Structure probing data (2A3 and DMS) for a 177-nucleotide construct. The 2A3 profile rests on 32,768 reads.

RNA sequence: GGGAACGACUCGAGUAGAGUCGAAAAGAGUUCGUCAAGACAUUCCUGGACCAGACCGGGUGCCUGCCGGGAGUACGCCGUACGGGUCGCACCACCGGCAUUGCUCUACAGGCCAUUGGCAUGGCGCAAAUACACUCAGAUUCGUCUGAGUGUAUUUAAAAGAAACAACAACAACAAC
Reactivity to 2A3 in 0.01 (KOAc 150mM, MgCl2 10mM, bicine 150mM(pH8.5), 24C), signal-to-noise 9, nucleotides 027 to 126: g070a020g030u100u110c050g080u110c130a110a050g040a040c010a070u040u060c010c010u040g080g040a120c020c010a040g050a110c010c030g060g020g030u100g020c000c020u030g020c040c030g080g010g000a020g010u010a020c040g010c010c010g040u080a130c150g060g010g100u190c050g010c030a050c010c000a020c010c000g000g000c010a010u010u180g000c010u010c010u040a070c030a040g010g080c010c010a050u060u100g030g000c040a020u050g020g000c030g000c050
Reactivity to DMS in 0.01 (KOAc 150mM, MgCl2 10mM, bicine 150mM(pH8.5), 24C), signal-to-noise 9, nucleotides 027 to 126: g010a110g010u010u000c050g010u010c150a110a130g000a060c060a140u000u000c010c010u000g010g010a100c050c040a070g000a120c050c040g000g010g010u010g010c020c080u000g010c090c060g000g000g000a120g020u000a060c180g010c010c010g010u010a130c250g000g000g010u010c220g010c110a140c020c080a140c130c010g000g010c010a050u000u000g010c010u000c020u000a070c080a100g000g010c010c060a090u010u010g010g020c140a130u000g010g010c050g010c150